Chemical mapping of a 207-nucleotide RNA with 2A3. Values cover nucleotides 27 to 156. It was measured as part of the RMDB library OK3TST. The 2A3 profile rests on 373 reads. 2A3 adducts were read by reverse transcription with SuperScript II with manganese.

[RMDB]
RNA sequence: GGGAACGACUCGAGUAGAGUCGAAAAAGCUAGAUAGUAUAGCCUACUGUACACCUAAGCUAUAUGGUAUAACCUAUUUGUCCUAGGCUACAAACCUGUAUAGCAUGUUACUGUACUGAAUACUGUAGACGUUUGUAACACAAUGGUAAGUAUUUAACGCCGUAUCGAUAUUCGUAUCGAUACGGCGAAAAGAAACAACAACAACAAC
Reactivity to 2A3 in 0.01 (KOAc 150mM, MgCl2 10mM, bicine 150mM(pH8.5), 24C), signal-to-noise 1, nucleotides 027 to 156: a000g020c030u030a000g000a180u160a040g100u150a180u080a110g060c030c000u070a110c020u050g000u030a030c040a020c070c070u180a210a000g010c000u000a000u000a000u000g000g030u060a140u000a110a050c030c000u010a060u080u040u140g160u000c000c000u000a000g030g020c000u080a030c030a060a200a030c000c000u000g000u000a000u000a000g000c000a000u020g000u000u070a020c020u000g020u000a000c000u090g050a090a000u110a080c000u070g160u140a090g020a020c020g030u000u000u140g110u100a060a000c060a050c050a130a020u070g050g000u100a080a050g000u030a030u040u090u000a160a000